[RMDB]
RNA sequence: GGGAACGACUCGAGUAGAGUCGAAAAGAUGGUGCCGGCAGACGAGAGUCAGCUGGAGGAGGAGAUACUUCAGAUGCUGCUCAAAGAGGGAAGUAUCAGAGUCAAAAAACCGAAGACGUUUGAGCAGCCGCUUAGGUAGUUUCGACUACCUAAGCGGAAAAGAAACAACAACAACAAC
Reactivity to DMS in 0.01 (KOAc 150mM, MgCl2 10mM, bicine 150mM(pH8.5), 24C), signal-to-noise 1, nucleotides 027 to 126: g000a080u000g050g000u010g000c020c000g030g000c040a080g050a020c000g020a170g000a270g000u000c010a060g020c000u000g020g000a010g010g010a130g050g000a110g000a050u000a000c020u000u000c020a240g000a090u000g010c030u000g000c000u000c000a000a030a060g040a190g010g010g000a020a020g020u000a020u000c000a090g000a090g010u000c080a020a080a040a050a050a160c020c020g000a060a190g000a150c070g010u000u000u000g010a030g000c020a010g020